[RMDB]
RNA sequence: GGGAACGACUCGAGUAGAGUCGAAAAUCUGUUGAGAUUUGUGAUCGUAUAGUCAAAGUCGGACUACGGUCACAGCAACAGAAGUUAGACUGCGACAAGUCCGACGGACUAUUCUGGGUUCUAACCACUUCACCAUAGUAUUCGUACUGUGGUGAAGAAAAGAAACAACAACAACAAC
Reactivity to DMS in 0.01 (KOAc 150mM, MgCl2 10mM, bicine 150mM(pH8.5), 24C), signal-to-noise 9, nucleotides 027 to 126: u000c000u000g010u010u000g010a070g010a090u000u010u000g020u010g010a050u000c030g010u000a040u010a040g010u000c010a090a120a150g010u000c090g010g000a010c010u000a080c200g010g010u000c000a010c000a010g010c010a040a020c020a090g010a080a100g010u000u000a100g010a120c000u000g010c060g000a060c080a140a040g000u000c000c000g010a040c020g000g000a050c010u000a020u000u000c030u010g030g010g000u000u000c040u000a080a220c060c080a250
Reactivity to 2A3 in 0.01 (KOAc 150mM, MgCl2 10mM, bicine 150mM(pH8.5), 24C), signal-to-noise 9, nucleotides 027 to 126: u000c010u010g060u050u110g140a170g020a290u080u120u100g000u020g010a020u040c020g000u050a050u070a140g010u010c040a090a230a130g140u130c060g040g000a000c010u030a040c070g040g000u000c000a000c000a000g000c000a000a020c000a020g150a110a000g000u010u090a030g010a110c010u020g040c070g060a050c070a100a010g000u000c000c000g000a010c020g020g020a020c000u010a020u050u010c080u200g060g010g040u060u020c020u040a070a080c010c000a030

The data come from the RNA Mapping Database (RMDB), library OK2TRN. Chemical mapping of a 177-nucleotide RNA with DMS and 2A3. The RNA was probed in 150 mM KOAc, 10 mM MgCl2 and 150 mM bicine (pH 8.5) at 24 C. DMS adducts were read by reverse transcription with MarathonRT. 2A3 adducts were read by reverse transcription with SuperScript II with manganese. 2A3 is a SHAPE reagent: it acylates the 2'-hydroxyl of flexible nucleotides of all four kinds. For DMS, 103,354 sequencing reads were counted.